Chemical mapping of a 207-nucleotide RNA with 2A3.
The 2A3 profile rests on 493 reads.
Conditions: 150 mM KOAc, 10 mM MgCl2 and 150 mM bicine (pH 8.5), 24 C.
2A3 adducts were read by reverse transcription with SuperScript II with manganese.
Values cover nucleotides 27 to 156.
RNA sequence: GGGAACGACUCGAGUAGAGUCGAAAAGUUCGCAUGGUGCACUAUUGUGUUAUUAGUAACUAAGUAAGCUUACAAUCGAAAAUGUUUAACCAUAAAAGGGUAAAAUGGUGUAAGACAGUCUAAUACUUUACGGCUUCACGUUUCGACGUGAAGCCAAGAGUUACCAAUCGUUCGCGAUUGGUAACUCAAAAGAAACAACAACAACAAC
Reactivity to 2A3 in 0.01 (KOAc 150mM, MgCl2 10mM, bicine 150mM(pH8.5), 24C), signal-to-noise 1, nucleotides 027 to 156: g010u130u140c020g000c160a090u110g070g070u040g080c060a070c040u060a140u160u210g060u000g000u020u040a030u000u030a070g140u090a030a000c040u020a060a040g110u060a070a050g120c020u030u030a030c040a080a140u000c070g050a110a160a000a000u030g030u080u110u040a010a000c010c000a000u050a120a060a010a000g040g000g000u050a060a040a020a000u060g010g000u030g000u000a020a000g020a030c120a060g040u020c030u070a010a020u020a180c060u170u050u030a040c020g000g010c000u000u030c000a000c000g020u000u080u120c180g100a040c000g000u000g000a000a000g050c000c000a000a000